The data come from the RNA Mapping Database (RMDB), library M2PK50. This 177-nucleotide RNA was probed chemically with DMS and 2A3. For DMS the reverse transcriptase was MarathonRT. The 2A3 profile rests on 15,413 reads. Reactivities are rounded to 0.1 and cut off at 0 and 3. Values cover nucleotides 27 to 126.
RNA sequence: GGGAACGACUCGAGUAGAGUCGAAAAGCAUACAACUUCGGUUGUAUGCAACCACAGAGUUGACUGUCAUAAACAACGUAACAUGUGAGUUACAAUAACACAUUGCAGCAGCUUUCGAGCUGCUGAACUGACGAUUAGUAUUCGUACUAAUCGUCAGAAAAGAAACAACAACAACAAC
Reactivity to DMS in 0.01 (KOAc 150mM, MgCl2 10mM, bicine 150mM(pH8.5), 24C), signal-to-noise 6, nucleotides 027 to 126: g000c000a010u000a010c000a000a000c010u000u020c160g050g020u000u000g010u000a000u000g000c000a030a070c000c010a030c010a000g000a070g020u000u000g000a180c000u000g000u000c300a070u010a020a010a020c010a020a000c030g020u000a040a040c060a120u000g020u010g000a110g010u000u000a050c100a100a090u000a050a060c090a060c140a070u000u010g010c000a010g010c000a000g000c000u000u000u000c170g010a010g010c010u000g000c000u000g010a020a100
Reactivity to 2A3 in 0.01 (KOAc 150mM, MgCl2 10mM, bicine 150mM(pH8.5), 24C), signal-to-noise 9, nucleotides 027 to 126: g000c000a000u000a000c010a010a000c000u040u080c210g110g000u000u000g000u000a010u000g000c000a000a000c010c000a000c000a000g010a000g010u020u010g120a300c000u010g000u030c060a120u110a100a020a010c000a000a000c020g020u070a050a030c040a080u120g090u080g240a120g060u080u090a030c040a070a100u210a170a030c080a000c030a120u090u290g040c000a000g000c010a000g000c000u100u040u150c240g110a010g010c000u030g010c000u000g000a000a020